[RMDB]
RNA sequence: GGGAACGACUCGAGUAGAGUCGAAAAACUGACCUUUCCAAAUAUUUAAGAGGUUGAAAUUUUAGCUACAUACAGUUUCAGGAGCUCAUUAGAUUUUCAAGAGUAUAUCUAAGAAUGUCAUGGCUACAUUUCAAAAUGUGGUAUUUGAAGACAGGUGGUAUAUGAAGCGAUUCGUCGCUUCAUAUACAAAAGAAACAACAACAACAAC
Reactivity to DMS in 0.01 (KOAc 150mM, MgCl2 10mM, bicine 150mM(pH8.5), 24C), signal-to-noise 1, nucleotides 027 to 156: a180c040u010g000a110c020c020u010u010u060c000c000a010a070a120u000a000u000u010u020a120a160g020a140g020g040u020u000g010a030a030a010u000u000u000u020a060g000c030u000a040c020a270u000a040c010a090g000u010u000u010c040a300g060g000a120g000c030u000c030a050u000u000a160g000a260u020u000u010u000c080a060a150g040a080g040u020a060u010a050u010c020u000a050a300g010a080a060u010g020u000c060a090u020g000g000c010u010a060c300a040u010u000u010c020a020a040a080a080u020g020u000g030g040u000a020u000u000u000g030a080a070g010a120c080a080g020g000u010g040
Reactivity to 2A3 in 0.01 (KOAc 150mM, MgCl2 10mM, bicine 150mM(pH8.5), 24C), signal-to-noise 2, nucleotides 027 to 156: a010c020u010g040a020c000c020u020u020u060c050c000a010a090a050u040a070u080u250u270a200a120g090a040g050g060u030u010g020a020a020a010u130u130u060u050a030g000c030u060a060c020a070u120a020c010a060g050u060u020u090c000a030g000g060a000g040c000u000c020a030u050u120a040g100a160u190u230u090u200c060a060a040g010a000g070u050a070u030a040u270c010u040a090a020g030a060a040u040g000u040c030a010u050g000g000c000u000a000c000a010u010u040u050c030a030a070a040a040u100g050u040g020g010u020a040u030u040u030g040a110a040g000a010c000a020g020g020u040g010
An RNA of 207 nucleotides, treated with DMS and 2A3 and read out base by base. For DMS, 1,316 sequencing reads were counted. Conditions: 150 mM KOAc, 10 mM MgCl2 and 150 mM bicine (pH 8.5), 24 C. For 2A3 the reverse transcriptase was SuperScript II with manganese.